About this RNA: The record gives the reactivity of an RNA of 177 nucleotides to DMS and 2A3. The RNA was probed in 150 mM KOAc, 10 mM MgCl2 and 150 mM bicine (pH 8.5) at 24 C. The DMS profile rests on 4,001 reads. 2A3 adducts were read by reverse transcription with SuperScript II with manganese. The data come from the RNA Mapping Database (RMDB), library M2PK50.

[RMDB]
RNA sequence: GGGAACGACUCGAGUAGAGUCGAAAAGCCCUCCGCUUCGGCGGAGGGCAAACAACAUACCGCCCUCUCAAAAAGAAGUUGAAAGAGAGGGCGGUUUGCGAAAAAGCAAAAGCUUCGGCUUUUGCAACAGUACUAUGUAGUUCGCUACAUAGUACUGAAAAGAAACAACAACAACAAC
Reactivity to DMS in 0.01 (KOAc 150mM, MgCl2 10mM, bicine 150mM(pH8.5), 24C), signal-to-noise 3, nucleotides 027 to 126: g010c000c000c000u000c010c000g020c010u010u000c190g020g030c010g030g020a010g010g000g010c000a000a010a050c030a120a110c010a010u000a010c010c000g020c000c010c000u000c010u000c010a030a100a100a110a100g010a140a130g020u010u000g000a100a130a170g000a030g010a010g000g000g000c000g000g000u000u000u000g010c050g000a070a050a100a120a160g000c000a000a010a000a010g020c000u000u020c220g020g010c000u000u000u000u000g010c010a030a050
Reactivity to 2A3 in 0.01 (KOAc 150mM, MgCl2 10mM, bicine 150mM(pH8.5), 24C), signal-to-noise 3, nucleotides 027 to 126: g010c020c020c010u000c040c010g080c020u060u100c220g140g010c000g000g010a010g040g000g000c020a000a000a000c000a000a000c000a000u070a010c000c010g010c000c000c000u030c000u010c010a110a120a060a030a040g200a210a080g140u200u190g110a130a130a000g000a010g000a000g000g000g000c000g000g000u000u000u000g000c000g040a080a000a010a020a020g000c000a020a000a000a000g000c000u050u130c210g070g000c000u000u020u000u000g000c000a000a000